[RMDB]
This 177-nucleotide RNA was probed chemically with DMS and 2A3. Reactivities are rounded to 0.1 and cut off at 0 and 3. DMS adducts were read by reverse transcription with MarathonRT. For 2A3 the reverse transcriptase was SuperScript II with manganese. Reactivities are given for positions 27 through 126. The RNA was probed in 150 mM KOAc, 10 mM MgCl2 and 150 mM bicine (pH 8.5) at 24 C.

RNA sequence: GGGAACGACUCGAGUAGAGUCGAAAAGAUAUGGACAUGGGAGAUGGAGUCACAAUCGGAAACGAUUGAAUGACGCGAAACAUUCAUGUCCUAAGUCAAAGCCCGAUCCUGUUCGCAGGAUCGGGCAUCAUUUAUCCGUCUUCGGACGGAUAAAUGAAAAAGAAACAACAACAACAAC
Reactivity to DMS in 0.01 (KOAc 150mM, MgCl2 10mM, bicine 150mM(pH8.5), 24C), signal-to-noise 3, nucleotides 027 to 126: g000a020u000a090u000g000g000a010c000a000u000g000g010g030a190g020a070u000g010g020a200g010u000c000a040c010a000a000u000c010g030g010a020a020a030c000g030a010u000u010g010a180a120u020g010a010c000g050c300g010a130a120a090c010a050u000u000c000a000u010g000u010c000c000u000a000a090g020u000c020a110a160a150g010c010c000c000g000a010u000c000c000u000g020u020u030c260g050c030a000g000g000a000u000c000g020g000g020c000a000
Reactivity to 2A3 in 0.01 (KOAc 150mM, MgCl2 10mM, bicine 150mM(pH8.5), 24C), signal-to-noise 3, nucleotides 027 to 126: g000a010u020a000u050g000g010a000c010a000u030g000g110g050a300g080a200u110g180g170a210g060u000c010a000c020a020a010u020c010g010g000a010a010a010c010g020a000u020u020g040a210a300u090g010a010c030g020c110g110a300a220a000c010a000u180u270c000a000u010g000u010c000c010u020a010a000g000u020c020a090a100a060g010c000c000c030g000a010u000c000c020u050g090u130u180c300g050c130a020g000g000a000u010c000g000g000g000c010a000